[RMDB]
RNA sequence: GGGAACGACUCGAGUAGAGUCGAAAACUCGAAACCAAGCUUCAAGUGUGGGGAAUUUGAGUCAAACAAUGAAUUCAAAUUAUGAUGCGUUGGAAAAAGCAAUUACUCAAUUUAUCAAUGAUGAUGCCAAGCGAUCGUACUUCGGUACGAUCGCUUGAAAAGAAACAACAACAACAAC
Reactivity to 2A3 in 0.01 (KOAc 150mM, MgCl2 10mM, bicine 150mM(pH8.5), 24C), signal-to-noise 1, nucleotides 027 to 126: c020u000c090g000a220a110a190c000c030a000a030g000c000u000u020c020a020a000g140u050g000u080g050g020g010g120a000a000u000u010u000g000a000g030u020c020a070a070a070c110a220a240u010g000a080a000u000u000c000a020a020a020u050u000a190u270g080a000u090g000c010g060u000u080g100g000a010a000a010a010a010g090c010a000a030u000u190a080c020u160c220a120a240u090u270u170a300u300c130a090a050u160g020a080u090g000a000u000g110c090